Source: RMDB library RFMREP, as collected in RNAgym. The record gives the reactivity of an RNA of 177 nucleotides to 2A3 and DMS. The reactions ran in a buffer of 150 mM KOAc, 10 mM MgCl2 and 150 mM bicine (pH 8.5), at 24 C. The 2A3 profile rests on 9,007 reads.
RNA sequence: GGGAACGACUCGAGUAGAGUCGAAAAUCUGAUCCAUGAUGACUUCCAAACACAUGUGGACUGUUGGAUGAAGCAUGCGGAUAUGGGACUGAGAUCAGACAAACUUAAGCGGUUCGCCGCUUAAGAACCAUACGAAUUGGUUCGCCAAUUCGUAUGGAAAAGAAACAACAACAACAAC
Reactivity to 2A3 in 0.01 (KOAc 150mM, MgCl2 10mM, bicine 150mM(pH8.5), 24C), signal-to-noise 6, nucleotides 027 to 126: u020c010u010g000a010u000c010c010a080u120g050a090u100g070a110c070u070u000c010c000a020a060a020c020a000c010a020u040g030u030g040g040a020c050u100g220u300u250g250g090a180u070g020a020a010g010c010a010u010g000c030g060g000a040u060a170u260g020g020g010a000c010u050g040a050g000a230u010c000a000g030a030c050a020a080a010c000u000u000a010a000g010c000g000g040u030u090c200g030c080c010g000c000u010u000a000a000g000a000a010
Reactivity to DMS in 0.01 (KOAc 150mM, MgCl2 10mM, bicine 150mM(pH8.5), 24C), signal-to-noise 4, nucleotides 027 to 126: u000c000u010g020a030u000c010c030a060u000g020a130u010g010a140c190u000u010c000c010a050a070a070c070a060c020a010u010g000u000g020g010a270c170u000g020u000u000g020g020a070u000g020a300a190g010c000a010u000g020c020g020g000a110u000a100u000g010g000g000a080c090u000g000a120g010a010u000c010a020g020a040c230a080a060a140c010u000u000a010a000g010c000g000g000u000u020c250g010c000c000g030c010u000u010a000a010g000a070a210